RNA sequence: GGGAACGACUCGAGUAGAGUCGAAAAGCAGUUUUGCCCCGUGCUGCCUUCCACCGGUUAAGACCUCCAAAAUCGAAGGGCUGCCCAGGCAGAGGAUGUCCCCUUGCCACCCUUGGAGGGGCAGCGCGAUACUUGGGAUAUUCGUAUCCCAAGUAUCAAAAGAAACAACAACAACAAC
Reactivity to 2A3 in 0.01 (KOAc 150mM, MgCl2 10mM, bicine 150mM(pH8.5), 24C), signal-to-noise 9, nucleotides 027 to 126: g030c040a060g020u040u120u240u190g040c000c000c000c000g010u020g010c000u010g000c000c010u030u030c010c010a060c030c030g010g020u050u070a080a030g050a080c000c010u040c030c020a060a070a050a140u140c090g080a090a050g030g030g000c030u050g030c010c020c010a050g030g000c020a020g020a050g120g020a050u140g140u140c020c010c000c000u010u030g010c000c010a060c010c010c010u020u050g030g020a040g010g000g020g000c000a000g010c010g000c020
Reactivity to DMS in 0.01 (KOAc 150mM, MgCl2 10mM, bicine 150mM(pH8.5), 24C), signal-to-noise 9, nucleotides 027 to 126: g020c050a070g010u010u010u020u010g010c030c000c010c030g030u010g000c010u000g000c010c010u000u010c020c010a090c120c100g000g010u010u010a090a100g000a120c020c010u000c020c050a050a060a070a090u020c100g010a110a060g010g010g000c070u000g010c030c040c080a140g010g010c030a050g010a090g010g010a160u020g010u020c070c020c010c030u010u010g000c040c030a140c030c010c020u000u000g010g000a080g000g010g000g010c010a010g010c020g010c060
Chemical mapping of a 177-nucleotide RNA with 2A3 and DMS. The data come from the RNA Mapping Database (RMDB), libraries RFM100 and RFMREP. For 2A3 the reverse transcriptase was SuperScript II with manganese. Conditions: 150 mM KOAc, 10 mM MgCl2 and 150 mM bicine (pH 8.5), 24 C.